[RMDB]
RNA sequence: GGGAACGACUCGAGUAGAGUCGAAAAGUGCAUGCAGACCAAUAAUGGACGUACUUGUGAUGAUUUAAAGAUGCCUCCAAGGUCACGUGCUCUGUUUGCACCAUGCUUAGGAAGGAGCGUACAGACCACAAGCUCCACGUUUCGACGUGGAGCUUGUAAAAGAAACAACAACAACAAC
Reactivity to 2A3 in 0.01 (KOAc 150mM, MgCl2 10mM, bicine 150mM(pH8.5), 24C), signal-to-noise 1, nucleotides 027 to 126: g050u010g000c010a020u000g020c000a000g030a040c020c030a040a050u300a090a070u120g070g030a020c010g000u010a010c000u000u060g080u050g020a000u020g030a020u020u130u170a100a290a040g230a030u180g060c030c020u050c000c000a010a010g000g030u120c090a000c050g050u060g000c020u050c020u040g080u010u140u000g000c040a010c000c000a010u110g030c050u050u070a040g080g050a100a040g050g020a000g030c000g030u060a080c050a030g030a050c000c080
Reactivity to DMS in 0.01 (KOAc 150mM, MgCl2 10mM, bicine 150mM(pH8.5), 24C), signal-to-noise 2, nucleotides 027 to 126: g010u000g010c010a020u000g020c030a060g020a050c090c050a180a210u010a100a070u020g000g020a030c040g030u000a100c020u000u000g000u020g010a080u000g040a100u000u010u000a040a090a230g000a050u000g000c010c030u020c000c040a010a060g010g000u010c140a040c110g050u000g010c050u000c050u000g010u000u000u010g030c000a040c000c050a070u010g000c020u000u000a100g030g010a100a090g010g000a030g020c050g060u010a090c100a140g020a210c170c100

Annotation:
Source: RMDB library OK2TRN, as collected in RNAgym. An RNA of 177 nucleotides, treated with 2A3 and DMS and read out base by base. The 2A3 profile rests on 904 reads. The DMS profile rests on 892 reads. The RNA was probed in 150 mM KOAc, 10 mM MgCl2 and 150 mM bicine (pH 8.5) at 24 C. For DMS the reverse transcriptase was MarathonRT. Values cover nucleotides 27 to 126.